This 177-nucleotide RNA was probed chemically with DMS. The reactions ran in a buffer of 150 mM KOAc, 10 mM MgCl2 and 150 mM bicine (pH 8.5), at 24 C. It was measured as part of the RMDB library TTRINS. DMS (dimethyl sulfate) methylates the pairing face of unpaired adenines and cytosines.
RNA sequence: GGGAACGACUCGAGUAGAGUCGAAAAGAUAUGGAAAAUCAUGGUGCCUCGGUAGAGACCAACAGCUCACGGGUCGGAAACGACCCUGAGACAUGGUCCUACCGAGGCACCAUGAUUUUCCUAAGUCGAUACGUUGGUAGUUCGCUACCAACGUAUCAAAAGAAACAACAACAACAAC
Reactivity to DMS in 0.01 (KOAc 150mM, MgCl2 10mM, bicine 150mM(pH8.5), 24C), signal-to-noise 1, nucleotides 027 to 126: g010a100u010a300u010g000g000a040a000a020a030u010c000a010u010g000g010u000g060c010c000u000c010g020g020u010a040g010a140g010a030c000c000a010a090c300a170g000c000u010c010a010c300g040g000g020u020c000g010g010a090a090a300c040g000a040c000c000c000u000g000a030g000a050c140a150u010g000g010u000c010c020u010a010c010c000g000a000g010g050c000a000c010c000a010u000g020a000u000u000u000u000c000c040u000a050a090g020u000c120